[RMDB]
RNA sequence: GGGAACGACUCGAGUAGAGUCGAAAAGAAAGAAAGAAGAAACGAGGCUGCUAAAGCGCAAAAAGAAAAACGAAAGCGCAUUCGUAUCAGUUAAGGAGUCACGAAAAGAAAGAAAGAAAGAAGAAAAAUAUACGUGCUGAUUCGUCAGCACGUAUAUAAAAGAAACAACAACAACAAC
Reactivity to 2A3 in 0.01 (KOAc 150mM, MgCl2 10mM, bicine 150mM(pH8.5), 24C), signal-to-noise 2, nucleotides 027 to 126: g070a020a110a010g070a000a020a060g060a010a020g010a000a180a000c000g020a000g040g020c010u050g030c030u080a040a110a000g040c010g010c040a000a110a030a080a000g260a040a000a100a030a020c110g160a060a030a030g000c000g000c030a100u020u020c020g000u040a050u140c030a030g000u080u080a180a000g030g000a000g030u090c000a030c090g020a040a180a000a030g150a120a020a020g040a000a080a010g090a000a040a000g190a060a010g050a040a080a000a090
Reactivity to DMS in 0.01 (KOAc 150mM, MgCl2 10mM, bicine 150mM(pH8.5), 24C), signal-to-noise 2, nucleotides 027 to 126: g020a010a040a080g010a010a010a060g010a090a080g000a050a110a080c050g000a040g000g000c010u030g000c040u010a090a100a150g000c000g000c050a040a110a040a100a060g030a080a000a070a100a060c120g010a040a040a060g000c040g000c040a080u040u020c040g010u000a040u000c040a070g000u000u010a100a100g000g000a060g020u010c050a060c090g030a020a020a010a010g000a050a060a140g020a040a030a030g000a080a010a040g010a110a040g000a020a020a030a080